[RMDB]
RNA sequence: GGGAACGACUCGAGUAGAGUCGAAAAGACCUCGAGGUGCCACCGGACGUCGUCGACCGGGCGACGGGAUUUCUCGAGGAGAUCAGCGUCGUCCCCGACGCACGGGCGAUCCGAGAGUACGCCACCGUCCUACGUCGGGAUUCGUCCCGACGUAGGAAAAAGAAACAACAACAACAAC
Reactivity to DMS in 0.01 (KOAc 150mM, MgCl2 10mM, bicine 150mM(pH8.5), 24C), signal-to-noise 1, nucleotides 027 to 126: g000a090c050c020u020c040g060a280g010g040u030g000c110c110a190c110c010g050g020a240c080g010u020c000g000u000c000g000a100c190c220g010g000g030c020g000a030c020g010g000g040a050u000u010u000c000u000c150g000a210g020g000a020g000a040u000c000a040g000c000g050u000c100g000u020c000c000c070c010g000a020c020g050c160a040c040g000g020g000c020g010a140u000c020c020g020a130g000a100g000u010a060c040g010c060c040a190c110c100g030